[RMDB]
RNA sequence: GGGAACGACUCGAGUAGAGUCGAAAAUAUAAUGUCACACGCGAUAAGUUGGAAAAACUUAUCUCUACUGCUCGUGAUGGCGUAAGGCGAGGCGAUAACUUCCAUAGUGUCUUAACAACAUUCAUUGCACACCAGUGGUUCGCCACUGGUAAAAGAAACAACAACAACAAC
Reactivity to 2A3 in 0.01 (KOAc 150mM, MgCl2 10mM, bicine 150mM(pH8.5), 24C), signal-to-noise 9, nucleotides 027 to 129: u160a000u040a030a130u130g030u050c020a000c000a000c050g030c010g010a010u000a010a020g010u020u040g150g050a150a040a020a020a000c000u010u010a010u000c000u010c020u100a160c080u100g060c030u030c040g030u060g050a200u020g020g000c030g030u050a030a040g040g000c030g010a010g010g030c020g020a030u040a130a040c040u070u000c030c020a040u050a070g050u040g020u040c020u060u080a050a020c040a020a010c000a040u070u090c020a050u060u180g030c080a050c010
Reactivity to DMS in 0.01 (KOAc 150mM, MgCl2 10mM, bicine 150mM(pH8.5), 24C), signal-to-noise 7, nucleotides 027 to 129: u020a080u060a060a030u010g000u030c020a000c090a060c020g020c160g000a030u000a040a000g020u000u000g030g030a100a050a070a020a020c010u040u000a000u010c000u000c070u000a090c110u050g000c130u040c000g040u030g030a030u000g000g010c020g000u040a070a080g040g030c060g010a060g020g040c040g010a070u040a060a080c060u000u000c010c010a030u040a060g010u000g020u000c050u030u080a090a100c160a060a020c080a060u020u020c130a060u030u030g000c090a070c120
Source information: An RNA of 170 nucleotides, treated with 2A3 and DMS and read out base by base. The RNA was probed in 150 mM KOAc, 10 mM MgCl2 and 150 mM bicine (pH 8.5) at 24 C. Reactivities are given for positions 27 through 129. For DMS, 45,031 sequencing reads were counted.